[RMDB]
RNA sequence: GGGAACGACUCGAGUAGAGUCGAAAAUCGCUUAACUACGCUGGGGCUUUGUGGGACAUUACAGUUAUAAACAAUGUGGACAAUGAAAUUGUUAAGUCUUCAGAUGUUGUAGACAGCAAUGAAAAUUUAAGGUAUCUCUUCGGAGAUACCAAAAGAAACAACAACAACAAC
Reactivity to DMS in 0.01 (KOAc 150mM, MgCl2 10mM, bicine 150mM(pH8.5), 24C), signal-to-noise 6, nucleotides 027 to 129: u050c130g010c060u020u030a090a050c060u020a040c110g050c030u040g000g010g000g000c040u030u040u020g000u040g010g000g000a110c090a070u000u000a110c090a130g000u050u020a090u110a030a020a010c120a050a050u000g010u040g010g070a070c020a090a070u050g020a100a090a260u060u020g000u010u060a060a090g000u010c050u020u020c080a070g010a030u030g040u030u020g020u040a040g040a000c070a000g020c030a020a020u000g000a060a060a100a070u080u050u020a100a130
Reactivity to 2A3 in 0.01 (KOAc 150mM, MgCl2 10mM, bicine 150mM(pH8.5), 24C), signal-to-noise 6, nucleotides 027 to 129: u070c010g040c060u090u100a060a050c020u080a060c040g030c020u020g000g000g020g020c000u000u020u050g080u090g060g040g030a000c010a010u040u110a000c020a030g030u050u050a130u130a170a080a040c100a020a040u110g020u100g080g010a000c030a020a030u080g120a140a040a060u050u010g030u020u030a090a050g000u000c000u010u020c010a040g040a250u150g080u150u100g020u020a030g010a070c030a010g020c000a030a040u090g080a050a070a040a040u160u190u140a110a010
The data come from the RNA Mapping Database (RMDB), library 15KLIB. An RNA of 170 nucleotides, treated with DMS and 2A3 and read out base by base. For 2A3 the reverse transcriptase was SuperScript II with manganese. DMS adducts were read by reverse transcription with MarathonRT.